RNA sequence: GGGAACGACUCGAGUAGAGUCGAAAAAUGAGCGUUGGGAAAGGAGUAGGAAGGUCCCAAUUUGGAAUUUUGACAUCCUAAAAGCCUUGGGUGCCGCAGAAUGAGUAAGCUGGAGGGUACUGUGUAACACUCCCUCCAGUUUCGACUGGAGGGAGUGAAAAGAAACAACAACAACAAC
Reactivity to DMS in 0.01 (KOAc 150mM, MgCl2 10mM, bicine 150mM(pH8.5), 24C), signal-to-noise 2, nucleotides 027 to 126: a030u000g010a120g000c090g030u010u000g030g010g000a090a080a080g010g010a110g010u000a060g010g000a100a080g030g010u000c060c010c030a060a110u000u000u020g000g000a090a040u000u000u000u030g010a100c060a040u000c010c010u000a040a040a060a160g000c060c040u010u010g030g010g010u000g020c040c040g000c100a040g000a070a050u000g000a120g030u010a030a070g010c050u000g000g010a070g000g000g000u010a070c130u010g010u000g000u010a070a140
Reactivity to 2A3 in 0.01 (KOAc 150mM, MgCl2 10mM, bicine 150mM(pH8.5), 24C), signal-to-noise 1, nucleotides 027 to 126: a000u130g000a030g000c040g000u050u050g020g000g040a020a080a050g020g030a050g000u100a050g000g050a020a000g030g040u060c040c010c050a040a040u170u070u100g120g000a070a020u190u020u020u150g010a050c020a040u050c000c000u070a130a150a020a110g000c000c010u030u000g000g000g020u000g050c060c020g000c030a000g100a100a050u110g000a050g120u050a060a000g020c080u020g000g050a030g030g050g020u010a150c020u060g030u000g050u100a100a070

The record gives the reactivity of an RNA of 177 nucleotides to DMS and 2A3. The reactions ran in a buffer of 150 mM KOAc, 10 mM MgCl2 and 150 mM bicine (pH 8.5), at 24 C. It was measured as part of the RMDB library OK2TRN. The 2A3 profile rests on 727 reads.